[RMDB]
RNA sequence: GGGAACGACUCGAGUAGAGUCGAAAAGGAGGACGAAGCAUAUUUCUGUUUCUGGAGGAUUAUUUAUAAUCUGCCGGAAAGUCUUGCAGGUGGCUGGGAUGUGUUCAGUCUGGUAGAAUUAAGCACGAAAACGUGUCCUUGUUCGCAAGGACACGAACUUAACAAUCCAGUUCGCUGGAUUGUUAAGAAAAGAAACAACAACAACAAC
Reactivity to 2A3 in 0.01 (KOAc 150mM, MgCl2 10mM, bicine 150mM(pH8.5), 24C), signal-to-noise 5, nucleotides 027 to 156: g040g010a020g010g010a010c040g040a040a010g050c040a030u040a090u160u140u100c070u060g070u030u040u010c010u010g010g010a030g010g000a000u010u020a010u020u220u010a080u040a040a020u010c010u040g070c020c000g000g030a060a020a020g040u040c040u100u070g020c050a030g010g070u050g010g050c030u020g020g020g010a040u050g010u010g010u090u050c030a020g020u010c050u060g030g020u040a030g040a070a050u110u090a110a020g020c040a020c090g060a020a050a070a040c010g010u000g000u000c000c000u000u000g020u050u040c110g000c100a000a010g000g010a020c000a000c000g000a000a000
Reactivity to DMS in 0.01 (KOAc 150mM, MgCl2 10mM, bicine 150mM(pH8.5), 24C), signal-to-noise 2, nucleotides 027 to 156: g020g000a080g000g020a080c020g000a090a100g020c050a090u010a130u000u000u010c030u000g010u000u000u000c000u000g000g010a030g000g000a020u000u010a020u010u000u000a070u000a070a010u010c010u000g010c000c000g000g000a020a040a060g010u000c020u000u000g010c040a120g000g030u000g020g010c030u010g010g010g030a070u000g000u000g000u000u000c020a110g010u000c000u020g010g030u000a060g010a100a100u000u000a030a100g000c040a120c040g000a030a040a110a150c010g040u000g020u000c000c000u000u000g020u000u010c270g000c040a020a000g010g020a020c010a000c000g010a010a020
Conditions: 150 mM KOAc, 10 mM MgCl2 and 150 mM bicine (pH 8.5), 24 C.
Chemical mapping of a 207-nucleotide RNA with 2A3 and DMS.
For DMS, 7,945 sequencing reads were counted.
2A3 adducts were read by reverse transcription with SuperScript II with manganese.
For DMS the reverse transcriptase was MarathonRT.